[RMDB]
RNA sequence: GGGAACGACUCGAGUAGAGUCGAAAAUCACUCUUGCGGGUUAAUUGGUUGAUCCGAAACUUAAUCUAUAAGUCAUUUAUAUUGUGCUGCUUAGGAACAAUGGCAGAUAUAGAGAUCAUAAACCCAGCAUCCCACACUGAUUCGUCAGUGUGGGAUGAAAAGAAACAACAACAACAAC
Reactivity to DMS in 0.01 (KOAc 150mM, MgCl2 10mM, bicine 150mM(pH8.5), 24C), signal-to-noise 1, nucleotides 027 to 126: u010c120a120c120u010c030u000u010g040c170g000g000g020u000u000a120a080u020u000g020g000u030u000g000a070u000c030c090g000a090a090a060c060u030u000a030a120u020c080u030a090u020a050a030g020u010c040a070u020u010u000a060u010a070u020u000g020u010g020c050u000g050c110u000u010a050g000g000a080a080c210a090a040u000g000g040c020a090g000a030u000a060u010a060g000a030g010a060u010c020a030u000a090a050a030c000c030c020a170g020